[RMDB]
RNA sequence: GGGAACGACUCGAGUAGAGUCGAAAAAUGGAUGACCUAGAUGCAUUUCCAAAGUACCUGGCAUCAUGCAUCGAAUGGUGCGCGGUAUCACUAUUGAUGGGUGCGCAGAGCAUAGUCACCGUGAAAACCCCAUUUUAGGAUUCGUCCUAAAAUGGGGAAAAGAAACAACAACAACAAC
Reactivity to 2A3 in 0.01 (KOAc 150mM, MgCl2 10mM, bicine 150mM(pH8.5), 24C), signal-to-noise 5, nucleotides 027 to 126: a000u140g020g030a070u020g020a020c000c040u030a060g020a080u040g040c010a030u030u040u100c020c000a070a050a050g080u050a080c010c030u040g060g000c010a040u050c010a010u070g010c020a080u060c090g050a110a030u060g050g010u020g020c070g000c020g030g030u030a020u110c030a030c100u150a110u170u130g060a070u060g020g100g110u050g000c040g000c030a040g020a020g100c010a020u020a030g010u010c010a010c040c010g020u050g030a090a070a040a060
Reactivity to DMS in 0.01 (KOAc 150mM, MgCl2 10mM, bicine 150mM(pH8.5), 24C), signal-to-noise 6, nucleotides 027 to 126: a050u000g010g010a090u000g000a040c040c070u000a090g000a060u000g000c020a050u000u000u010c020c030a040a110a160g000u010a070c140c050u000g020g000c170a040u000c110a030u000g030c050a060u010c100g010a100a040u010g010g020u000g000c020g020c060g010g000u000a040u000c040a070c290u000a100u010u010g000a060u000g000g010g010u000g010c040g020c070a040g000a120g010c070a080u000a100g000u000c020a040c050c020g020u000g000a060a050a110a110